[RMDB]
RNA sequence: GGGAACGACUCGAGUAGAGUCGAAAAGCAGUUUGACUCACGAUAGACUCUUGAGGAAGAGUGUCAGUAUUGCUUCCUCAAGCAAUACAUUACGGUAUGCCAAUACUGUAAUUGACAGCAGAUUGGCAUCUGCUCUAUCUCAUCAAACUGGUGAGUCUGGUAGGGGAUGGUUCGCCAUCCCCUACCAAAAAGAAACAACAACAACAAC
Reactivity to DMS in 0.01 (KOAc 150mM, MgCl2 10mM, bicine 150mM(pH8.5), 24C), signal-to-noise 1, nucleotides 027 to 156: g000c070a050g030u010u010u000g010a060c020u010c010a020c120g030a130u010a000g000a070c010u000c000u000u000g000a200g000g000a070a030g000a030g040u000g000u010c080a160g000u000a030u000u000g010c000u000u040c040c020u300c140a220a050g000c020a030a030u010a010c020a300u010u000a010c040g000g000u000a020u000g060c220c190a080a080u020a010c010u000g010u000a020a150u000u010g010a170c030a020g040c010a020g010a130u020u010g030g050c090a170u000c020u000g000c000u000c000u000a030u000c030u000c090a060u000c000a000a030a060c050u010g000g000u000g010a050g000u010c070
Reactivity to 2A3 in 0.01 (KOAc 150mM, MgCl2 10mM, bicine 150mM(pH8.5), 24C), signal-to-noise 2, nucleotides 027 to 156: g050c040a000g010u010u050u040g050a080c060u030c140a040c130g010a060u010a060g060a000c050u040c030u040u070g120a060g010g140a060a010g000a000g000u020g050u030c020a010g000u030a000u030u040g020c000u020u020c020c030u000c030a000a000g000c010a000a030u020a040c000a020u080u060a020c060g020g020u100a000u010g140c020c030a030a000u040a280c020u000g020u120a110a170u090u110g030a020c000a020g000c000a000g050a080u080u120g130g010c040a020u020c010u000g000c000u030c040u010a080u000c000u000c010a060u000c010a040a060a020c000u000g000g070u020g010a020g020u070c070

The data come from the RNA Mapping Database (RMDB), library OK3TST. Structure probing data (DMS and 2A3) for a 207-nucleotide construct. 2A3 adducts were read by reverse transcription with SuperScript II with manganese. The reactions ran in a buffer of 150 mM KOAc, 10 mM MgCl2 and 150 mM bicine (pH 8.5), at 24 C.